RNA sequence: GGGAACGACUCGAGUAGAGUCGAAAAGGGGAGACGCCACUAAAGAAGCCAUCGAACUUGAAGACGAAGGACUCGUCCACAAGUACGGGAAGAAGAAGGGCCAGCCCUUUACACGUAACGAGCUGGCUAUCAACGCACUGCGCCGUCGCCUGGAGCGGCAGAUACCUUUAUUCGUAAAGGUAUCUGCAAAAGAAACAACAACAACAAC
Reactivity to 2A3 in 0.01 (KOAc 150mM, MgCl2 10mM, bicine 150mM(pH8.5), 24C), signal-to-noise 3, nucleotides 027 to 156: g000g010g000g000a060g000a020c030g030c020c010a060c090u150a040a070a070g070a050a000g070c030c000a060u100c050g010a010a050c010u040u050g020a060a030g000a010c020g030a120a080g040g040a100c010u000c010g000u020c020c010a030c010a050a020g010u050a040c050g020g020g000a050a030g020a030a000g020a010a060g040g000g000c000c000a010g000c020c000c000u040u050u050a070c180a020c060g090u090a090a010c040g000a020g000c000u000g010g000c000u030a040u070c050a000a100c010g020c040a050c070u080g000c040g030c040c040g030u020c020g050c040c000u040g010g030a060g020c060g030
Reactivity to DMS in 0.01 (KOAc 150mM, MgCl2 10mM, bicine 150mM(pH8.5), 24C), signal-to-noise 1, nucleotides 027 to 156: g030g020g050g000a140g020a040c080g000c010c010a110c100u020a120a090a050g000a180a110g020c000c060a080u000c060g020a040a050c040u000u010g050a200a170g020a100c030g000a100a190g000g040a300c090u010c040g050u010c010c010a210c010a040a020g020u000a080c070g020g030g000a040a050g040a060a040g010a090a090g000g000g030c000c030a080g010c000c000c010u000u000u020a080c140a150c220g020u000a100a030c100g010a050g030c010u020g000g000c040u000a060u040c030a000a100c000g000c030a060c060u000g040c040g000c050c010g030u020c030g000c040c010u010g060g010a030g010c050g000